[RMDB]
RNA sequence: GGGAACGACUCGAGUAGAGUCGAAAAGAAAGCUCCUCACCCGUGUGGAGGAGAAUGGCUAUAACCACCGAAACCUGAGGAAACAGGAAGCCACAACGCAAGCCAUGUGGUUUGCACACGGAAGAAAGACUGGAUACUGCUUCGGCAGUAUCCAGUCAAAAGAAACAACAACAACAAC
Reactivity to 2A3 in 0.01 (KOAc 150mM, MgCl2 10mM, bicine 150mM(pH8.5), 24C), signal-to-noise 2, nucleotides 027 to 126: g140a060a030a000g110c010u000c000c000u000c000a010c010c010c000g000u010g000u040g000g000a000g000g000a000g000a000a050u040g000g050c000u000a010u020a160a060c020c020a040c020c020g060a130a000a000c000c000u080g020a070g110g120a200a090a000c000a000g000g010a020a020g000c000c000a010c030a040a030c090g010c050a040a000g010c000c080a070u110g100u190g010g000u010u000u050g010c020a000c000a000c000g000g000a000a000g110a030a080a000